[RMDB]
RNA sequence: GGGAACGACUCGAGUAGAGUCGAAAAGCACAUGCUACCGUGCCCAGCUAAUUUUCGUGUAUUUUGUAGAGUCGGAGGUCUCACUAUGUUGCCCAGGCUGGUCUCAAACUGGACUCAAGUGAUCCUCCCACCUUUCCUGGCUAGCCUAGGGUAGUGCACUUCCUUAGGCGUUCGCGCCUAAGGAAGUAAAAGAAACAACAACAACAAC
Reactivity to 2A3 in 0.01 (KOAc 150mM, MgCl2 10mM, bicine 150mM(pH8.5), 24C), signal-to-noise 1, nucleotides 027 to 156: g000c010a030c020a030u160g000c000u050a050c000c040g020u060g030c000c020c010a010g020c000u060a150a160u040u030u020u180c210g000u210g010u110a210u050u120u060u130g130u110a070g010a130g090u050c010g040g020a010g040g020u010c050u050c140a010c000u080a180u220g050u110u010g060c010c010c010a000g020g010c000u080g060g020u170c050u070c120a040a130a030c040u060g020g050a030c020u000c070a030a010g000u030g030a030u010c000c000u000c030c010c000a020c000c000u020u180u000c000c010u050g090g000c010u010a010g010c020c010u020a030g000g050g000u030a030g000u030g050c020